[RMDB]
RNA sequence: GGGAACGACUCGAGUAGAGUCGAAAAACGAUCACCGCCAAGGUGAAGAGCACGAGGGCGAUCUGGCUCCAGAGGGUGAUCCGGGCCACCUCUGCAUCGACCUUCUCUAUGACCCCUUCCACCCGGGCCAACGAUAAUGUUUCGACAUUAUCGUUGGAAAAGAAACAACAACAACAAC
Reactivity to DMS in 0.01 (KOAc 150mM, MgCl2 10mM, bicine 150mM(pH8.5), 24C), signal-to-noise 4, nucleotides 027 to 126: a070c130g010a160u000c020a010c010c010g000c130c170a120a170g010g020u010g010a030a060g000a080g010c280a040c160g010a060g000g000g010c020g010a060u000c080u010g020g010c040u000c110c030a070g000a080g000g000g020u010g000a090u020c050c020g000g000g000c300c040a070c040c000u000c020u010g010c080a090u000c040g000a090c020c030u000u000c020u000c070u020a080u010g010a160c040c010c010c050u010u000c030c050a110c020c010c040g000g000g030
Reactivity to 2A3 in 0.01 (KOAc 150mM, MgCl2 10mM, bicine 150mM(pH8.5), 24C), signal-to-noise 3, nucleotides 027 to 126: a000c040g010a040u020c010a010c020c000g090c150c140a150a080g010g010u020g040a050a030g020a020g020c050a010c210g030a070g000g010g030c050g030a050u010c070u140g100g000c040u040c030c020a030g040a080g090g070g020u060g030a060u030c000c000g020g020g000c010c010a020c000c010u000c010u040g000c020a070u030c000g050a110c010c010u060u030c010u000c010u010a140u230g110a180c010c020c000c060u070u080c040c020a100c000c020c020g010g000g010
The record gives the reactivity of an RNA of 177 nucleotides to DMS and 2A3. For 2A3, 4,183 sequencing reads were counted. For 2A3 the reverse transcriptase was SuperScript II with manganese. The data come from the RNA Mapping Database (RMDB), library OK2TST. The DMS profile rests on 3,850 reads.